[RMDB]
RNA sequence: GGGAACGACUCGAGUAGAGUCGAAAACGGAUGCGGUCUCGUGUGCCAAGUGUGAGCGGACGCGAAGCGCUGCGAGCCAGUCGGUCACGUACCGAAGCCCUUCCGAGGGGCAUCCCUGUUGGAGUCGCCAAACAUGUAUUUUCGAAUACAUGUUUGGAAAAGAAACAACAACAACAAC
Reactivity to DMS in 0.01 (KOAc 150mM, MgCl2 10mM, bicine 150mM(pH8.5), 24C), signal-to-noise 7, nucleotides 027 to 126: c180g010g000a060u010g010c010g000g010u010c040u000c010g030u000g020u010g000c000c020a060a300g010u000g010u000g000a270g020c100g010g000a190c020g010c010g000a180a160g000c040g020c010u020g020c010g000a100g000c020c010a110g010u000c030g000g010u010c020a120c200g010u020a040c000c010g000a030a060g000c000c010c010u000u000c170c100g030a100g000g000g000g000c020a060u010c000c000c110u020g000u000u000g000g000a130g010u000c030g000
Reactivity to 2A3 in 0.01 (KOAc 150mM, MgCl2 10mM, bicine 150mM(pH8.5), 24C), signal-to-noise 9, nucleotides 027 to 126: c040g040g030a040u090g020c020g020g060u050c040u020c070g010u050g050u110g050c010c010a120a060g080u100g010u040g180a070g060c080g040g110a090c020g010c050g070a080a040g040c030g000c060u060g010c000g010a010g000c010c000a040g100u070c040g000g010u020c030a040c250g040u080a010c020c000g010a030a030g020c000c000c000u060u040c070c080g060a070g000g000g000g010c000a010u010c000c000c020u020g010u020u020g030g020a110g080u020c010g000